[RMDB]
RNA sequence: GGGAACGACUCGAGUAGAGUCGAAAAGAGGACGUUCUACUGAUUGUUUUCAAAGUAGUUCGUCCGAAUGAGCGGUCGUACCCGAGCUCUAAACACUUGUCGGCUGUUAUGUCACGACUUGUGGAGAGGGUAGGAUCUCGUUCGCGAGGUCCUACCCAAAAGAAACAACAACAACAAC
Reactivity to 2A3 in 0.01 (KOAc 150mM, MgCl2 10mM, bicine 150mM(pH8.5), 24C), signal-to-noise 8, nucleotides 027 to 126: g150a030g010g000a000c000g000u000u010c000u010a000c000u020g080a150u200u120g190u180u110u110u210c080a110a100a010g000u000a000g000u000u000c000g000u000c000c000g000a010a010u050g000a000g010c020g010g030u100c060g050u070a100c010c010c000g020a020g010c000u000c000u030a090a120a000c010a000c010u000u020g000u000c000g010g000c020u050g170u300u180a170u240g110u150c070a050c160g000a000c000u000u000g000u010g010g030a060g020a040
Reactivity to DMS in 0.01 (KOAc 150mM, MgCl2 10mM, bicine 150mM(pH8.5), 24C), signal-to-noise 3, nucleotides 027 to 126: g020a290g000g000a020c000g010u000u000c000u000a010c010u010g000a140u030u040g010u020u010u030u020c070a070a140a030g020u000a000g000u000u000c020g000u000c000c010g010a180a070u010g000a050g030c060g010g000u000c080g010u000a050c010c000c000g000a150g000c030u010c000u000a060a180a140c000a020c020u000u000g020u010c000g000g020c020u000g010u050u050a040u040g030u030c090a210c030g020a020c000u010u010g000u000g000g010a090g000a170

Conditions: 150 mM KOAc, 10 mM MgCl2 and 150 mM bicine (pH 8.5), 24 C.
This 177-nucleotide RNA was probed chemically with 2A3 and DMS.
For DMS the reverse transcriptase was MarathonRT.
For 2A3, 6,187 sequencing reads were counted.
It was measured as part of the RMDB library OK1LIB.